RNA sequence: GGGAACGACUCGAGUAGAGUCGAAAAAUGCAUCACAUCCGGCAAUAUUCAUUAAAACUGAUACGUCAUGCCAACCGCGACAAUAUCAUCAUUAUUAAUAUUCAAUUUGUUAUCGCUAUCCAGUUGGAACUAACUACCCGUUCGCGGGUAGUUAGUUAAAAGAAACAACAACAACAAC
Reactivity to DMS in 0.01 (KOAc 150mM, MgCl2 10mM, bicine 150mM(pH8.5), 24C), signal-to-noise 1, nucleotides 027 to 126: a120u000g000c010a040u000c080a070c060a040u000c050c010g000g000c090a080a100u000a040u000u020c090a060u000u000a040a030a080a150c300u000g030a080u000a070c140g000u000c030a030u000g020c050c090a080a060c090c080g000c080g000a080c050a060a080u000a000u000c010a010u030c050a040u030u000a050u000u000a010a050u000a100u000u000c060a050a120u000u000u000g020u000u000a050u000c060g010c060u000a050u000c030c020a110g030u000u000g020g010
An RNA of 177 nucleotides, treated with DMS and read out base by base. High DMS reactivity at an A or C suggests that its Watson-Crick edge is free. The DMS profile rests on 1,013 reads. The reactions ran in a buffer of 150 mM KOAc, 10 mM MgCl2 and 150 mM bicine (pH 8.5), at 24 C.